[RMDB]
RNA sequence: GGGAACGACUCGAGUAGAGUCGAAAAGAUAUGGAGUGUGUACAGAGCUGGUCGGAAACGAUGCAGCGACGAAGUACCACUCCUAAGUCAAAACCAGCGAUUUCUACUUCGGUAGAAAUCGCUGGAACAAUUCCCUUCUCUUCGGAGAAGGGAAUUGAAAAGAAACAACAACAACAAC
Reactivity to DMS in 0.01 (KOAc 150mM, MgCl2 10mM, bicine 150mM(pH8.5), 24C), signal-to-noise 2, nucleotides 027 to 126: g010a040u000a300u000g000g010a030g010u000g030u050g050u020a000c000a040g000a190g010c000u010g010g030u010c010g030g000a100a100a160c010g010a020u000g020c010a020g000c010g000a100c260g020a070a090g000u000a000c000c000a020c000u000c000c000u000a000a060g010u000c030a150a060a090a180c000c000a000g010c000g000a030u000u000u000c000u000a000c000u000u020c140g050g020u010a000g000a000a010a000u000c000g000c000u000g010g000a000a050
Reactivity to 2A3 in 0.01 (KOAc 150mM, MgCl2 10mM, bicine 150mM(pH8.5), 24C), signal-to-noise 1, nucleotides 027 to 126: g000a060u070a050u150g020g020a000g020u000g020u030g000u020a010c030a030g060a020g050c000u020g060g000u020c010g020g080a040a050a050c000g030a020u300g300c010a000g000c020g090a070c020g010a030a060g020u020a000c000c020a000c010u000c000c000u010a030a000g020u010c030a040a020a060a180c010c000a000g000c000g000a000u000u000u000c010u020a030c010u050u080c280g190g020u000a020g030a010a000a010u000c000g080c000u000g000g010a000a000
Conditions: 150 mM KOAc, 10 mM MgCl2 and 150 mM bicine (pH 8.5), 24 C. Structure probing data (DMS and 2A3) for a 177-nucleotide construct.